[RMDB]
RNA sequence: GGGAACGACUCGAGUAGAGUCGAAAAGCAGGAGUGUUCGCACUCCUGCAAAUGAAAGCGGCCAGCUCCACGCCGCCAAACAAUAUGGAGCACAAAGUAAAGAAAGGCCUACGUUCGCGUAGGCCAACUAAUGACAAUAGUUCGCUAUUGUCAUUAGAAAAGAAACAACAACAACAAC
Reactivity to DMS in 0.01 (KOAc 150mM, MgCl2 10mM, bicine 150mM(pH8.5), 24C), signal-to-noise 7, nucleotides 027 to 126: g000c000a010g010g000a020g040u000g010u000u020c230g030c010a000c000u000c000c000u000g000c010a000a040a050u010g000a090a120a140g000c000g010g010c010c050a090g010c010u000c010c000a020c200g010c000c000g010c010c130a060a110a090c070a030a020u010a080u000g000g000a010g040c000a180c260a070a060a080g010u010a080a100a110g000a070a120a130g000g010c000c000u000a000c000g020u000u010c200g020c010g020u000a010g000g000c010c000a000a020
Reactivity to 2A3 in 0.01 (KOAc 150mM, MgCl2 10mM, bicine 150mM(pH8.5), 24C), signal-to-noise 9, nucleotides 027 to 126: g010c010a000g000g010a000g000u020g030u070u150c160g050c080a000c000u000c000c000u000g000c000a000a000a000u110g010a020a030a020g010c000g010g000c000c020a040g000c000u010c010c000a010c040g000c000c010g000c020c020a070a110a010c040a040a010u090a080u280g010g000a000g140c010a000c010a010a090a020g200u300a120a060a040g110a080a130a020g010g000c000c000u000a010c000g020u030u080c220g000c010g080u000a000g000g000c000c000a000a000
An RNA of 177 nucleotides, treated with DMS and 2A3 and read out base by base. Reactivities are given for positions 27 through 126. Source: RMDB library M2PK50, as collected in RNAgym. The RNA was probed in 150 mM KOAc, 10 mM MgCl2 and 150 mM bicine (pH 8.5) at 24 C. The DMS profile rests on 12,417 reads.